Background
Structure probing data (DMS and 2A3) for a 177-nucleotide construct. For DMS the reverse transcriptase was MarathonRT. The reactions ran in a buffer of 150 mM KOAc, 10 mM MgCl2 and 150 mM bicine (pH 8.5), at 24 C. High DMS reactivity at an A or C suggests that its Watson-Crick edge is free. 2A3 adducts were read by reverse transcription with SuperScript II with manganese.
[RMDB]
RNA sequence: GGGAACGACUCGAGUAGAGUCGAAAACGUUAGGUUAUCUUUAUGCACAUCAACAAGAUGGACUGACACAAAAUGAUAUUGCUAAAGCAUUACAACGAACAGGUCCAACUGUCAGUAAUUUAUUAAGCCUUGCGAAGUUGUUCGCAACUUCGCAAGGAAAAGAAACAACAACAACAAC
Reactivity to DMS in 0.01 (KOAc 150mM, MgCl2 10mM, bicine 150mM(pH8.5), 24C), signal-to-noise 2, nucleotides 027 to 126: c100g080u000u000a030g000g020u060u000a070u000c000u000u000u040a060u000g100c150a140c190a160u000c010a250a150c230a020a070g000a070u030g000g000a060c000u030g000a020c120a000c210a000a030a080a100u070g000a090u000a070u000u020g030c000u030a170a040a210g000c170a050u000u000a070c000a100a130c050g000a130a080c000a040g000g000u000c000c040a000a030c130u000g020u000c000a000g000u000a000a060u030u070u000a010u020u000a050a190g050
Reactivity to 2A3 in 0.01 (KOAc 150mM, MgCl2 10mM, bicine 150mM(pH8.5), 24C), signal-to-noise 3, nucleotides 027 to 126: c030g010u060u110a040g000g080u050u020a050u040c030u010u120u030a120u190g100c040a020c000a170u080c040a010a160c060a060a020g010a030u060g020g000a050c010u020g010a000c050a000c070a060a120a060a070u090g080a090u030a060u270u140g030c060u180a210a080a000g010c000a000u020u010a060c040a150a000c160g080a040a000c080a010g070g050u010c020c000a010a020c070u010g000u020c000a010g000u010a010a040u060u070u170a120u130u180a100a010g000